Source information:
This 177-nucleotide RNA was probed chemically with DMS and 2A3. In probing experiments dimethyl sulfate is read out at A N1 and C N3, which are open when not base-paired.
RNA sequence: GGGAACGACUCGAGUAGAGUCGAAAAGAUAUGGAUCUAGUAGUGUGCAAGGCGAGAGAUCGGAAACGAUCUUAACGCUGAUGACCACACACCAAGAUCCUAAGUCAAAAGCCACCUUCGGGUGGCACUUUACCUCAAACUUCGGUUUGAGGUAAAGAAAAGAAACAACAACAACAAC
Reactivity to DMS in 0.01 (KOAc 150mM, MgCl2 10mM, bicine 150mM(pH8.5), 24C), signal-to-noise 4, nucleotides 027 to 126: g000a030u000a190u010g000g000a010u000c000u000a160g010u010a130g030u010g020u000g000c040a080a070g010g020c010g010a300g000a000g000a020u000c000g030g000a030a040a080c000g030a000u000c000u000u000a100a200c020g030c000u000g030a060u020g010a120c300c000a000c000a000c010a100c150c220a050a060g010a010u000c000c000u000a030a060g000u000c000a110a080a130a140g000c000c020a000c000c000u000u020c230g010g000g030u000g000g010c010a010
Reactivity to 2A3 in 0.01 (KOAc 150mM, MgCl2 10mM, bicine 150mM(pH8.5), 24C), signal-to-noise 2, nucleotides 027 to 126: g010a000u030a000u090g000g000a000u000c010u020a070g110u080a060g010u270g000u000g010c070a190a150g020g000c020g010a090g000a010g000a100u020c010g000g030a020a030a010c010g010a000u000c000u050u090a300a080c010g010c020u010g050a200u050g000a020c030c000a000c010a000c000a010c030c040a070a010g000a020u000c000c000u010a040a020g020u010c020a080a060a050a180g010c000c000a000c000c010u040u090c220g200g000g000u000g000g000c000a000

The RNA was probed in 150 mM KOAc, 10 mM MgCl2 and 150 mM bicine (pH 8.5) at 24 C. It was measured as part of the RMDB library TTRDES.